[RMDB]
This 177-nucleotide RNA was probed chemically with 2A3 and DMS. 2A3 adducts were read by reverse transcription with SuperScript II with manganese. Source: RMDB library RFM100, as collected in RNAgym. The reactions ran in a buffer of 150 mM KOAc, 10 mM MgCl2 and 150 mM bicine (pH 8.5), at 24 C. For DMS, 3,071 sequencing reads were counted. DMS adducts were read by reverse transcription with MarathonRT.
RNA sequence: GGGAACGACUCGAGUAGAGUCGAAAAUAGUGUUCCUCAUGGCGAGCAGAUGGAACCGGGAGACAUGGAGUCCCUGGCCAGUGUGAGUCCUAGCAUUGCAGGAGGGGAGACCCUGGAGGAGAGAGCCUAUCCCCUUGGAGUUCGCUCCAAGGGGAUAAAAAGAAACAACAACAACAAC
Reactivity to 2A3 in 0.01 (KOAc 150mM, MgCl2 10mM, bicine 150mM(pH8.5), 24C), signal-to-noise 3, nucleotides 027 to 126: u200a060g200u090g040u040u000c000c000u030c020a030u050g030g000c040g000a010g000c000a010g090a160u040g100g010a000a150c030c000g000g080g000a250g030a030c090a110u250g180g080a110g040u010c010c000c000u000g040g010c000c020a050g000u040g020u040g060a070g030u010c000c000u030a040g020c030a100u030u160g060c000a000g000g130a000g040g020g020g010a040g000a020c000c000c010u020g020g020a020g040g010a040g010a010g000a000g000c000c010
Reactivity to DMS in 0.01 (KOAc 150mM, MgCl2 10mM, bicine 150mM(pH8.5), 24C), signal-to-noise 3, nucleotides 027 to 126: u020a130g010u010g010u000u000c000c000u000c060a100u010g010g000c040g020a300g020c050a050g000a140u010g000g030a020a130c060c110g030g000g020a060g010a040c080a220u040g000g020a250g000u030c000c000c000u000g000g010c010c030a090g020u010g020u000g000a290g010u000c000c000u020a100g010c040a090u000u050g040c040a070g000g030a100g000g000g010g020a170g020a120c040c070c020u000g010g000a060g000g000a060g000a090g010a100g000c120c050